[RMDB]
RNA sequence: GGGAACGACUCGAGUAGAGUCGAAAAGUCGGCGGGCGGGUCCCCUGGAUCGACGCCACCAUUUCCAGGACCCGGCGGGUCGCUGCGAUCUCAUGCACCCGAAACAUGCGCGCACCGGCGGCCGCCGGUGCGUGCCGCCGUUCGCGGCGGCACGCACAAAAGAAACAACAACAACAAC
Reactivity to 2A3 in 0.01 (KOAc 150mM, MgCl2 10mM, bicine 150mM(pH8.5), 24C), signal-to-noise 1, nucleotides 027 to 126: g060u030c010g020g000c020g000g000g080c010g000g020g020u020c050c030c000c020u050g040g000a040u010c020g020a010c020g010c010c010a010c000c000a080u000u000u010c000c000a000g000g010a080c000c000c000g010g050c010g050g000g020u070c070g010c010u010g000c000g010a070u030c030u000c040a020u090g000c010a030c000c000c000g030a060a020a020c000a050u030g010c030g010c000g030c030a050c070c120g160g020c120g050g020c030c030g010c000c030g030